[RMDB]
RNA sequence: GGGAACGACUCGAGUAGAGUCGAAAAGUAAAGGCGGAGGAGGGUUUUGGCUUGCGCUCGGUCCGCCCGCGCGUGGUGUGGGCUGGAAUUCGUGUGUGGAGGAUGAUUAAUGCCGCCCGCCCAGGAAUAGCAGGAUAUACUUCGGUAUAUCCUGCUAAAAAGAAACAACAACAACAAC
Reactivity to DMS in 0.01 (KOAc 150mM, MgCl2 10mM, bicine 150mM(pH8.5), 24C), signal-to-noise 1, nucleotides 027 to 126: g010u010a040a070a080g000g020c020g000g020a040g020g000a150g020g000g000u000u010u010u010g010g020c020u000u000g010c060g010c010u000c020g010g020u000c010c030g000c020c000c000g020c050g050c100g020u010g020g010u010g040u000g010g000g040c000u000g030g000a020a050u010u010c010g010u000g030u000g020u010g000g030a070g010g010a080u010g020a110u010u000a070a170u030g010c000c010g000c010c010c060g000c010c000c000a130g000g000a100a090
An RNA of 177 nucleotides, treated with DMS and read out base by base. The DMS profile rests on 1,856 reads.